[RMDB]
RNA sequence: GGGAACGACUCGAGUAGAGUCGAAAACGUCUGUUCGCAGACGGCAUCUCCUAAGUCUUUCGCUCGAGGUAUAAGCUAGCUUAUCGGAAACGAUAAGCUUGGACCUUAUACUACCCACCGAGCAGAAAGAUAUGGACCUCUGGUCAUUCGUGACCAACGUGAAUUCUUUCUUCGGAAAGAAUUCACGAAAAGAAACAACAACAACAAC
Reactivity to 2A3 in 0.01 (KOAc 150mM, MgCl2 10mM, bicine 150mM(pH8.5), 24C), signal-to-noise 2, nucleotides 027 to 156: c000g010u000c000u030g080u080u080c300g010c070a010g000a000c020g030g040c030a130u040c050u040c050c010u030a160a100g010u000c000u000u010u010c000g070c000u030c000g000a020g000g000u010a000u000a000a000g040c010u000a000g000c000u000u000a000u000c000g070g000a070a050a040c010g010a000u000a010a010g000c000u010u020g000g010a010c000c010u000u000a000u000a010c020u020a050c050c110c030a070c030c000g000a000g000c140a020g000a000a000a000g010a000u010a030u010g060g000a060c030c020u120c100u070g000g020u000c010a050u110u090c190g110u040g000a010c010c040a010a050